[RMDB]
RNA sequence: GGGAACGACUCGAGUAGAGUCGAAAACGCGCGUCCCGCCGGCCGCCCAGGGAAACCGGGAGGCUCCGGGCUCUGGGGGGAGUAUGGCCGCAAGGCUGAAACUUGAAGGCAUUGACGGAGGGGUACCACUCGGUCGUUAAUUCGUUAACGACCGAGUAAAAGAAACAACAACAACAAC
Reactivity to 2A3 in 0.01 (KOAc 150mM, MgCl2 10mM, bicine 150mM(pH8.5), 24C), signal-to-noise 2, nucleotides 027 to 126: c060g010c000g010c060g020u080c000c020c000g000c000c000g060g000c000c000g110c090c000c000a030g100g000g060a070a230a230c000c000g070g020g010a060g060g090c020u000c000c000g000g000g000c000u000c000u050g010g080g030g000g000g020a030g040u140a100u160g090g010c010c010g080c010a000a000g030g020c050u150g100a090a030a100c080u060u070g020a110a140g040g020c030a030u000u260g030a010c000g000g010a020g000g050g030g030u020a010c000c010
Reactivity to DMS in 0.01 (KOAc 150mM, MgCl2 10mM, bicine 150mM(pH8.5), 24C), signal-to-noise 1, nucleotides 027 to 126: c230g010c060g000c110g030u040c040c000c020g020c090c030g010g000c000c040g000c020c030c020a080g030g000g000a020a040a040c000c020g000g030g030a300g000g080c140u090c010c020g010g000g020c000u000c000u030g000g050g070g060g000g050a050g030u020a070u020g010g020c000c030g020c120a060a080g020g000c080u000g000a120a110a060c070u010u010g000a040a130g000g030c070a240u020u080g010a160c030g000g030a020g000g000g000g000u030a080c080c040
Chemical mapping of a 177-nucleotide RNA with 2A3 and DMS. The 2A3 profile rests on 727 reads. For 2A3 the reverse transcriptase was SuperScript II with manganese. The reactions ran in a buffer of 150 mM KOAc, 10 mM MgCl2 and 150 mM bicine (pH 8.5), at 24 C.